The record gives the reactivity of an RNA of 207 nucleotides to DMS and 2A3. The reactions ran in a buffer of 150 mM KOAc, 10 mM MgCl2 and 150 mM bicine (pH 8.5), at 24 C. DMS adducts were read by reverse transcription with MarathonRT.
RNA sequence: GGGAACGACUCGAGUAGAGUCGAAAAUGCCACGGGAAAAAUUGCCAUGUCUGUGUGAUAUCAAAUAGUCUGAUCAAGUCAGCAAAUAAGAAAUGUCAAUCACUCAGGUUUUGUCGUUGGCACAAGGAAAUCAAAACAAUGGGGUGAUUCAAUAUCAGGUAUGCUUUUAUUUCGAUAAAAGCAUACCAAAAGAAACAACAACAACAAC
Reactivity to DMS in 0.01 (KOAc 150mM, MgCl2 10mM, bicine 150mM(pH8.5), 24C), signal-to-noise 2, nucleotides 027 to 156: u000g030c050c010a130c050g000g060g000a040a090a040a130a070u010u000g030c030c060a080u000g030u000c020u020g020u010g100u000g030a080u000a110u020c050a060a150a140u000a090g010u000c010u010g020a080u010c070a070a150g050u000c040a060g000c020a030a020a050u000a120a100g000a110a070a040u000g020u000c030a010a070u000c010a020c010u000c030a170g020g030u030u000u000u010g030u020c010g020u010u000g010g040c010a060c090a040a070g000g000a090a110a060u010c060a020a010a060a040c080a070a070u010g010g000g060g020u000g000a060u000u000c050a060a050u000a080u020c090a130
Reactivity to 2A3 in 0.01 (KOAc 150mM, MgCl2 10mM, bicine 150mM(pH8.5), 24C), signal-to-noise 3, nucleotides 027 to 156: u020g000c000c000a000c010g000g020g030a050a080a000a000a040u140u200g050c050c030a050u110g030u040c030u000g000u020g040u030g010a020u010a010u110c030a020a030a070u070a040g140u020c020u030g010a030u100c060a070a130g160u020c000a010g000c020a000a070a120u200a070a050g090a120a070a010u140g060u120c050a020a000u020c000a000c010u010c020a020g010g050u030u010u040u090g140u020c050g030u050u050g030g000c010a010c010a040a020g020g010a030a040a040u070c040a010a020a030a190c060a080a050u160g040g000g000g010u010g030a030u100u080c080a080a030u180a060u300c010a000